Structure probing data (2A3 and DMS) for a 177-nucleotide construct.
Conditions: 150 mM KOAc, 10 mM MgCl2 and 150 mM bicine (pH 8.5), 24 C.

[RMDB]
RNA sequence: GGGAACGACUCGAGUAGAGUCGAAAAGAAAGAAAGCCGAAGCAGCGAAAGAGGUCAAACGUCAGGAUUUCGGGCCUAAAAACGACAUUAUGCAGAAAGCCGACUUCAAUGUCGUAAACAAAGAAAACAUAAUUAUGCCGUUCGCGGCAUAAUUAUGAAAAGAAACAACAACAACAAC
Reactivity to 2A3 in 0.01 (KOAc 150mM, MgCl2 10mM, bicine 150mM(pH8.5), 24C), signal-to-noise 4, nucleotides 027 to 126: g090a010a120a010g080a090a050a020g020c000c000g030a060a030g070c050a010g010c030g040a140a040a060g060a030g000g030u100c040a120a020a030c060g080u100c080a030g050g000a020u050u050u070c030g040g000g000c000c010u110a100a100a010a000a000c010g010a000c000a000u020u070a050u180g030c020a000g070a090a040a010g070c040c040g040a050c020u050u050c060a010a090u030g000u000c000g040u040a000a030a030c110a010a070a010g130a040a080a000a000
Reactivity to DMS in 0.01 (KOAc 150mM, MgCl2 10mM, bicine 150mM(pH8.5), 24C), signal-to-noise 4, nucleotides 027 to 126: g000a060a060a070g000a070a080a110g010c030c010g000a130a070g010c100a060g000c040g030a050a100a090g000a090g000g010u030c040a050a120a120c130g000u000c070a050g000g000a130u000u010u000c040g020g000g010c010c010u000a040a030a040a080a030c020g000a010c000a020u000u010a100u020g000c080a100g000a090a070a120g020c100c080g000a090c040u000u000c060a020a030u030g020u000c020g020u000a030a040a060c170a050a070a100g000a100a080a090a110
Source information
The data come from the RNA Mapping Database (RMDB), library OK1LIB.